[RMDB]
RNA sequence: GGGAACGACUCGAGUAGAGUCGAAAAGGCGAGCUGAUCCAGGUGGGUGGGGCGCAGCCGGUCGGCGUCGGUGAGCGCGGCCGGCGAGCGGCCCGCGCAGCGAUCCGUCAGCUCCGGAUCGUCCAGAUAAUUAUGGCAUGUUCGCAUGCCAUAAUUAAAAAGAAACAACAACAACAAC
Reactivity to 2A3 in 0.01 (KOAc 150mM, MgCl2 10mM, bicine 150mM(pH8.5), 24C), signal-to-noise 2, nucleotides 027 to 126: g110g010c140g040a020g000c010u000g030a050u000c050c120a070g080g130u020g010g200g000u020g010g020g020g040c000g000c020a010g010c050c010g010g010u020c070g300g180c000g010u060c070g160g240u300g110a160g000c010g000c000g010g010c010c000g000g000c000g000a000g000c010g040g120c010c010c020g030c020g010c020a010g110c020g010a040u040c020c000g000u020c020a000g010c000u000c020c010g030g010a070u090c050g020u050c000c030a030g010a180
Reactivity to DMS in 0.01 (KOAc 150mM, MgCl2 10mM, bicine 150mM(pH8.5), 24C), signal-to-noise 4, nucleotides 027 to 126: g020g030c130g030a020g010c020u010g010a050u010c060c120a220g020g010u000g000g020g060u000g020g030g010g020c010g010c010a300g000c010c010g000g020u000c000g050g030c020g030u000c030g010g020u010g000a130g010c010g030c020g000g000c010c000g000g000c040g000a020g020c000g030g000c000c010c010g030c010g020c030a060g010c020g000a060u010c090c130g010u000c020a050g000c020u010c050c020g010g000a060u010c070g000u000c040c040a160g000a220